An RNA of 177 nucleotides, treated with 2A3 and DMS and read out base by base.

RNA sequence: GGGAACGACUCGAGUAGAGUCGAAAACAAACGCAACGAGGGACAGAGGAGGGAGUAUCGGUAUCGUUGCUGAAGUGCGUCCGUACCACCUCGGCAGCCCGUAGAAGUAAACAACCUGGACCCUCUGAUUACCAUUAGGGUUCGCCCUAAUGGUAAUAAAAGAAACAACAACAACAAC
Reactivity to 2A3 in 0.01 (KOAc 150mM, MgCl2 10mM, bicine 150mM(pH8.5), 24C), signal-to-noise 6, nucleotides 027 to 126: c010a000a080a010c080g050c100a050a050c090g000a010g000g010g020a020c020a030g070a110g100g010a050g030g040g020a040g040u060a030u110c010g010g010u080a090u240c050g020u020u020g000c020u030g010a040a010g020u040g040c080g050u050c110c040g030u090a030c000c020a010c000c000u000c000g010g000c000a000g010c000c010c020g000u050a040g010a190a010g030u140a040a070a050c030a010a030c020c010u030g110g090a290c000c000c000u000c010u020g020
Reactivity to DMS in 0.01 (KOAc 150mM, MgCl2 10mM, bicine 150mM(pH8.5), 24C), signal-to-noise 9, nucleotides 027 to 126: c060a070a110a100c200g000c130a070a110c140g000a040g000g010g030a250c040a070g000a120g010g000a150g010g000g010a150g020u000a050u000c030g010g010u010a070u010c140g010u000u000g020c010u000g000a030a050g010u000g010c140g010u000c140c200g010u010a070c120c020a030c020c020u000c010g010g000c020a040g010c010c030c030g020u000a060g010a070a120g010u010a070a080a090c070a060a140c040c010u000g010g000a120c020c010c010u010c020u000g000

Reactivities are given for positions 27 through 126. For DMS the reverse transcriptase was MarathonRT. Conditions: 150 mM KOAc, 10 mM MgCl2 and 150 mM bicine (pH 8.5), 24 C.